[RMDB]
RNA sequence: GGGAACGACUCGAGUAGAGUCGAAAACUUGGCUUCGGCAAACUGUGUCCACAUAGAAUGGCCUGCAAGCGACUGGUUUCCAUGAACAUGCCUCUUAACUCAGAUGGAACGGUUCUCUUCAAUGCCAGUACCACCCUACUUUCGAGUAGGGUGGUACAAAAGAAACAACAACAACAAC
Reactivity to DMS in 0.01 (KOAc 150mM, MgCl2 10mM, bicine 150mM(pH8.5), 24C), signal-to-noise 1, nucleotides 027 to 126: c050u010u020g040g000c010u000u000c170g000g000c050a090a130a100c090u010g010u000g000u000c030c090a050c050a150u010a080g000a080a050u000g020g020c010c040u020g040c170a030a030g010c110g000a100c050u020g000g010u000u000u000c020c050a060u010g010a080a090c130a090u020g030c060c000u000c070u000u000a100a080c100u010c120a160g070a150u000g030g000a020a040c040g000g000u000u000c020u000c020u000u000c090a100a100u010g000c040c040a080
Reactivity to 2A3 in 0.01 (KOAc 150mM, MgCl2 10mM, bicine 150mM(pH8.5), 24C), signal-to-noise 1, nucleotides 027 to 126: c020u020u110g060g010c000u080u060c070g090g000c030a090a110a030c050u020g000u080g030u090c090c040a060c000a090u090a050g150a220a110u090g010g000c000c020u080g010c070a070a010g020c010g060a030c030u030g050g050u060u070u060c030c010a010u050g030a040a010c000a040u060g030c040c010u080c040u100u070a100a060c020u010c080a020g000a130u040g000g030a060a000c030g030g000u030u070c020u050c000u020u040c020a030a010u010g040c040c000a000